[RMDB]
RNA sequence: GGGAACGACUCGAGUAGAGUCGAAAAAGUACAGAGAGUAUAUGGAAGCAUAUAAUCUUGUCUCUGCAUCAGGUUUCCGCCUUUGGUGUUAUAAGACCUUUGAUAUUUAUAAUCUCUGGUCUACUUUGUACAUGUGAGUUCGCUCACAUGAAAAGAAACAACAACAACAAC
Reactivity to DMS in 0.01 (KOAc 150mM, MgCl2 10mM, bicine 150mM(pH8.5), 24C), signal-to-noise 2, nucleotides 027 to 129: a080g040u050a040c040a060g000a020g020a040g060u000a010u000a020u020g010g000a160a110g030c000a000u000a000u030a020a040u000c050u050u040g020u000c030u000c040u020g000c060a100u000c070a020g040g000u010u020u020c080c070g010c030c020u000u020u000g000g010u010g000u000u000a100u020a110a040g010a000c000c030u010u030u010g010a020u040a050u000u000u000a140u000a030a000u020c020u000c040u060g000g000u000c000u040a130c080u000u030u020g010u020a130
Reactivity to 2A3 in 0.01 (KOAc 150mM, MgCl2 10mM, bicine 150mM(pH8.5), 24C), signal-to-noise 6, nucleotides 027 to 129: a000g040u040a010c040a000g050a000g000a010g090u030a020u020a010u040g060g080a110a070g150c020a000u050a010u010a040a040u040c040u070u090g050u040c010u000c030u130g020c010a060u030c010a020g050g000u030u080u020c020c020g010c030c000u100u040u100g030g000u010g010u040u070a100u020a130a010g000a000c000c000u000u010u020g040a040u040a080u060u280u050a160u120a140a060u020c010u000c010u000g000g000u000c000u000a020c030u050u070u070g070u020a040